Structure probing data (DMS and 2A3) for a 177-nucleotide construct. It was measured as part of the RMDB library M2PK50. For 2A3 the reverse transcriptase was SuperScript II with manganese. The RNA was probed in 150 mM KOAc, 10 mM MgCl2 and 150 mM bicine (pH 8.5) at 24 C.
RNA sequence: GGGAACGACUCGAGUAGAGUCGAAAAAGGAUAGGAUUCGUCCUAUCCUACACCAAAACCUCCUGGCGGUGGGGCGCCGGCCCCGCCGGGAAGGCCGCCUUAUUGGUAGCUGGUUCGCCAGCUACAAGACAAAGUGACAAUUCGUUGUCACUUUGUCAAAAGAAACAACAACAACAAC
Reactivity to DMS in 0.01 (KOAc 150mM, MgCl2 10mM, bicine 150mM(pH8.5), 24C), signal-to-noise 3, nucleotides 027 to 126: a020g000g000a010u000a000g010g000a040u000u020c200g000u000c010c000u000a010u000c000c000u000a020c130a170c040c020a090a040a100a200c020c020u000c000c010u000g010g010c010g030g030u010g010g000g010g020c030g020c150c170g000g000c010c020c010c020g000c010c020g010g000g010a050a020g010g040c130c110g020c100c060u000u000a130u000u020g010g000u000a000g010c010u000g010g010u010u010c170g020c010c000a000g010c000u000a000c000a080a080
Reactivity to 2A3 in 0.01 (KOAc 150mM, MgCl2 10mM, bicine 150mM(pH8.5), 24C), signal-to-noise 3, nucleotides 027 to 126: a000g000g010a000u010a000g000g010a010u020u100c180g050u020c060c000u000a000u000c000c000u010a000c020a040c010c000a020a040a080a080c000c000u010c000c000u010g030g000c020g050g190u110g030g120g020g040c110g070c090c070g110g030c020c010c030c010g000c000c030g000g010g000a030a010g030g000c040c030g070c020c030u140u220a250u110u230g130g010u010a010g000c000u010g020g030u040u030c200g010c050c000a000g000c010u000a010c010a000a000